[RMDB]
RNA sequence: GGGAACGACUCGAGUAGAGUCGAAAAGAACCGUGAGUGGAACCCUGAUCCUUUAUUGGGGAGUACACUCGAGGAGUGGAAGGCGUUGUUGGGGGGGAGAUGGGCUUACCUACGGGAAUCCCUGGGUUAAGGAAACGGUUCGCCGUUUCCAAAAGAAACAACAACAACAAC
Reactivity to DMS in 0.01 (KOAc 150mM, MgCl2 10mM, bicine 150mM(pH8.5), 24C), signal-to-noise 5, nucleotides 027 to 129: g030a070a100c030c050g050u070g010a000g010u020g010g010a150a270c010c010c010u000g010a040u020c250c130u020u030u050a000u000u000g000g000g000g000a110g030u010a160c070a030c010u000c000g070a130g070g020a110g030u000g030g010a060a020g000g020c030g030u040u040g030u000u000g010g000g000g000g000g000g000a060g030a080u040g000g000g000c150u030u040a060c040c030u020a120c160g040g000g020a170a050u040c000c030c020u030g030g030g000u030u080a060a090
Reactivity to 2A3 in 0.01 (KOAc 150mM, MgCl2 10mM, bicine 150mM(pH8.5), 24C), signal-to-noise 5, nucleotides 027 to 129: g030a050a020c030c020g090u080g030a030g000u050g030g010a080a060c010c000c000u020g010a050u130c060c080u190u190u220a050u040u040g000g000g030g000a010g020u060a020c020a000c000u020c000g010a050g000g010a040g020u140g040g030a050a060g040g010c080g040u050u070g040u080u080g050g000g010g000g000g000g000a040g020a040u060g020g000g020c000u040u080a120c000c020u050a050c090g020g000g000a040a030u000c000c000c000u020g090g000g000u050u100a080a070